[RMDB]
RNA sequence: GGGAACGACUCGAGUAGAGUCGAAAAAGCAGGACCGCGUUACGACGCGGUCCUGCAGCAAUGAGUAGAAGCGGUCAAAUUUGGUGUCGAGUUCCAACAAACCAAAUUCGGGCCUUGCUCACUGCAAAAAACUCUCUUUAGUUCGCUAAAGAGAGAAGUAACGUGUAAGGUUCGCCUUACACGUUACAAAAGAAACAACAACAACAAC
Reactivity to 2A3 in 0.01 (KOAc 150mM, MgCl2 10mM, bicine 150mM(pH8.5), 24C), signal-to-noise 1, nucleotides 027 to 156: a000g020c010a020g000g000a020c020c000g040c040g020u070u110a100c290g040a010c000g010c000g060g000u000c000c000u000g000c000a000g000c000a000a010u000g000a000g000u030a040g020a090a010g100c040g060g010u000c010a010a020a020u000u000u000g010g030u030g110u140c110g090a070g170u180u170c110c050a040a050c030a080a180a030c010c020a000a000a000u030u010c060g040g010g000c000c000u000u010g000c000u000c000a010c010u010g000c000a000a030a030a010a010a030c000u000c000u020c000u000u000u000a030g000u040u050c200g030c160u010a000a000a000g010a000g010a000g000a030a010